Structure probing data (2A3 and DMS) for a 207-nucleotide construct. For DMS, 5,286 sequencing reads were counted. 2A3 adducts were read by reverse transcription with SuperScript II with manganese. The 2A3 profile rests on 6,752 reads. The reactions ran in a buffer of 150 mM KOAc, 10 mM MgCl2 and 150 mM bicine (pH 8.5), at 24 C.
[RMDB]
RNA sequence: GGGAACGACUCGAGUAGAGUCGAAAACGUUAUAGUUGCAAACGACUCUAACUACUCUCUAGCAGCUUAGGCUAGCUAGCCAUCAACCACACGUUUCGCACGUGGACAGUGGAUUCUGAUGGUCAUAUUACAGUGUGCUAGCGAGGGAACUCCGUCCGUAAUAUUACCCGUUCGCGGGUAAUAUUACAAAAGAAACAACAACAACAAC
Reactivity to 2A3 in 0.01 (KOAc 150mM, MgCl2 10mM, bicine 150mM(pH8.5), 24C), signal-to-noise 8, nucleotides 027 to 156: c040g010u070u080a090u070a150g010u010u080g070c090a110a080a070c040g010a010c010u000c010u020a060a060c030u130a090c000u010c000u000c000u020a000g000c010a010g000c020u100u090a060g080g050c050u020a030g030c030u030a020g010c020c000a010u010c010a020a180c000c000a010c010a030c060g010u020u070u100c180g040c070a060c070g040u110g020g060a030c030a060g050u040g020g050a110u250u010c040u120g000a010u010g010g030u050c010a040u050a070u180u160a050c050a020g060u060g010u030g260c000u000a000g000c010g020a010g000g010g030a030a030c040u010c040c020g060u060c040c030
Reactivity to DMS in 0.01 (KOAc 150mM, MgCl2 10mM, bicine 150mM(pH8.5), 24C), signal-to-noise 3, nucleotides 027 to 156: c040g020u000u000a070u000a100g030u000u010g010c050a110a140a220c050g020a030c020u010c010u010a030a070c030u000a120c000u010c040u010c020u010a040g020c010a160g020c030u000u000a140g050g020c040u000a040g030c060u000a100g010c010c000a040u000c030a030a300c030c030a050c010a030c010g030u000u000u000c170g020c140a120c050g020u000g010g000a070c080a100g030u000g000g010a170u000u000c060u000g000a050u000g000g010u010c040a090u000a110u000u000a120c160a060g010u000g000u000g010c010u000a040g020c020g030a080g000g000g000a120a070c040u000c010c030g020u010c070c130